The record gives the reactivity of an RNA of 177 nucleotides to DMS and 2A3. The data come from the RNA Mapping Database (RMDB), library TTRDEL. Conditions: 150 mM KOAc, 10 mM MgCl2 and 150 mM bicine (pH 8.5), 24 C.
RNA sequence: GGGAACGACUCGAGUAGAGUCGAAAAGAUAUGGAGUACGCGCUGCAAGGCGAAGAACUCGGAAACGAGGGAGCCUUGACCCAGCUGAAUGUACUCCUAAGUCAAAACUUUCACUUCGGUGAAAGAACAGCGUAUCAAGGUUCGCCUUGAUACGCUGAAAAGAAACAACAACAACAAC
Reactivity to DMS in 0.01 (KOAc 150mM, MgCl2 10mM, bicine 150mM(pH8.5), 24C), signal-to-noise 1, nucleotides 027 to 126: g010a020u000a300u010g020g000a050g000u000a020c000g000c100g000c000u000g000c020a000a060g030g000c000g060a090a150g020a070a150c000u000c020g000g000a170a100a120c010g000a020g000g000g000a080g020c000c010u020u000g020a090c200c280c050a020g010c000u010g040a050a110u020g000u000a000c000u000c000c010u020a000a220g000u010c020a100a040a130a160c000u000u000u000c020a000c000u000u000c190g050g040u000g010a000a010a030g000a170a270
Reactivity to 2A3 in 0.01 (KOAc 150mM, MgCl2 10mM, bicine 150mM(pH8.5), 24C), signal-to-noise 1, nucleotides 027 to 126: g010a050u050a040u170g010g000a030g010u010a000c010g000c000g010c030u000g000c010a000a000g000g050c000g120a200a090g030a060a050c000u000c020g030g000a130a130a040c010g000a000g000g010g020a000g000c000c000u000u030g020a090c090c060c010a020g000c060u160g220a300a210u270g000u020a000c000u000c000c000u030a130a000g010u000c030a020a010a010a250c000u000u000u000c000a010c020u010u100c300g190g000u050g030a000a020a000g020a050a070